[RMDB]
RNA sequence: GGGAACGACUCGAGUAGAGUCGAAAAUCGCCAGGCCGCGCCCACGGCCACGGGCGCCGUCGCGGUGGUCCUUCCAUUGGCCCCGGUCGAUUACCGAUGCCCGCACGUUGCCGUCGCCGGCCAGCGCAUACAUGCAGAACUUCGGUUCUGCAUGUAUAAAAGAAACAACAACAACAAC
Reactivity to 2A3 in 0.01 (KOAc 150mM, MgCl2 10mM, bicine 150mM(pH8.5), 24C), signal-to-noise 2, nucleotides 027 to 126: u080c000g020c020c010a080g000g010c010c010g080c020g020c090c030c040a020c020g000g010c000c000a000c020g000g020g000c010g010c040c030g070u060c030g010c010g010g040u190g020g000u160c020c000u160u160c070c040a110u060u110g040g010c010c030c000c000g000g040u110c080g050a080u100u160a070c060c020g040a020u070g020c000c050c010g010c020a030c030g030u030u040g000c000c000g010u000c020g010c020c020g030g030c020c000a000g010c010g010c010
Reactivity to DMS in 0.01 (KOAc 150mM, MgCl2 10mM, bicine 150mM(pH8.5), 24C), signal-to-noise 3, nucleotides 027 to 126: u010c040g030c000c040a180g020g000c010c030g020c160g030c050c060c120a060c020g010g000c010c090a020c040g000g000g010c000g030c140c080g020u000c030g000c010g010g010u010g020g000u010c020c090u010u000c070c070a110u010u000g020g020c030c030c080c170g000g010u000c160g010a060u000u000a060c080c020g000a080u020g020c060c060c010g010c040a030c050g000u000u000g000c020c000g020u000c270g040c030c000g020g010c000c000a070g000c050g010c300